Record summary
The record gives the reactivity of an RNA of 177 nucleotides to 2A3 and DMS. The RNA was probed in 150 mM KOAc, 10 mM MgCl2 and 150 mM bicine (pH 8.5) at 24 C. For DMS, 2,383 sequencing reads were counted.
RNA sequence: GGGAACGACUCGAGUAGAGUCGAAAAGAUAUGGAGCUAAGACAUGCUCUAAGUACAGCGAAGAACACGAAUCUCGGAAACGAGAUUCGUGGGAGCUGGAACUGAGCAACAGCUUAGCUCCUAAGUCCACAUACUUGUGGUUCGCCACAAGUAUGUGAAAAGAAACAACAACAACAAC
Reactivity to 2A3 in 0.01 (KOAc 150mM, MgCl2 10mM, bicine 150mM(pH8.5), 24C), signal-to-noise 2, nucleotides 027 to 126: g040a010u130a070u280g020g000a000g000c000u020a040a000g030a120c060a190u110g010c020u010c000u010a020a000g010u020a050c010a000g010c060g250a300a020g050a140a000c010a000c000g000a000a000u000c010u000c010g010g100a060a080a060c020g000a010g000a010u000u000c000g000u000g000g020g000a020g000c000u000g020g020a020a010c020u030g000a000g020c010a050a200c060a080g050c000u000u000a010g000c010u000c000c000u000a020a000g000u000c010
Reactivity to DMS in 0.01 (KOAc 150mM, MgCl2 10mM, bicine 150mM(pH8.5), 24C), signal-to-noise 3, nucleotides 027 to 126: g000a100u000a300u000g000g000a010g030c000u000a000a000g000a040c130a300u010g020c010u000c000u000a010a070g010u000a200c010a010g010c000g010a120a250g010a160a210c000a000c000g020a010a000u000c000u000c000g000g000a050a060a190c010g020a000g010a000u000u000c000g030u000g000g000g000a070g010c000u000g000g000a120a120c300u000g000a010g030c000a040a080c270a220g010c010u000u000a010g000c000u000c010c000u000a020a040g000u000c030